[RMDB]
RNA sequence: GGGAACGACUCGAGUAGAGUCGAAAAACUGCAUCUACGGAUGCAGAACUACGUUCAUCCAAUUUAUUGGGACGCAUGAAAUGAGAAUAGGGAACGGGAUUCUCAUACGCAGGCUACGGCCUGCGAAAAAACUCCUUAUGCUUCGGCAUAAGGAGAACUGAUAUAAGCAGUUCGCUGCUUAUAUCAGAAAAGAAACAACAACAACAAC
Reactivity to DMS in 0.01 (KOAc 150mM, MgCl2 10mM, bicine 150mM(pH8.5), 24C), signal-to-noise 2, nucleotides 027 to 156: a150c020u010g000c000a000u000c000u010a090c290g090g010a030u010g020c010a010g010a050a100c010u000a010c000g020u000u010c040a240u010c090c030a090a150u010u020u010a130u030u000g010g000g020a020c050g010c020a130u000g010a090a140a080u010g000a080g010a080a050u000a130g000g000g000a090a060c050g010g010g000a300u000u000c000u010c020a030u000a140c000g000c000a030g040g000c010u000a090c300g060g000c000c010u040g000c010g000a000a020a060a030a040a060c000u000c000c000u010u000a020u000g000c010u000u000c300g070g000c020a000u010a000a000g000g020a010g000a000a000
Reactivity to 2A3 in 0.01 (KOAc 150mM, MgCl2 10mM, bicine 150mM(pH8.5), 24C), signal-to-noise 3, nucleotides 027 to 156: a000c000u000g000c000a000u020c010u040a030c210g120g000a010u010g000c000a000g000a010a010c040u110a030c020g020u010u020c020a070u050c020c030a060a090u130u120u100a150u230u130g030g010g000a030c060g010c080a070u130g080a090a130a050u030g010a020g010a040a010u040a060g050g040g010a040a020c040g000g040g000a010u010u010c010u000c010a000u040a040c020g020c000a000g010g000c000u030a060c240g100g000c000c000u010g010c000g000a010a000a000a000a000a000c000u000c000c000u010u000a000u000g000c000u010u040c170g080g000c000a000u000a000a000g000g000a000g000a000a010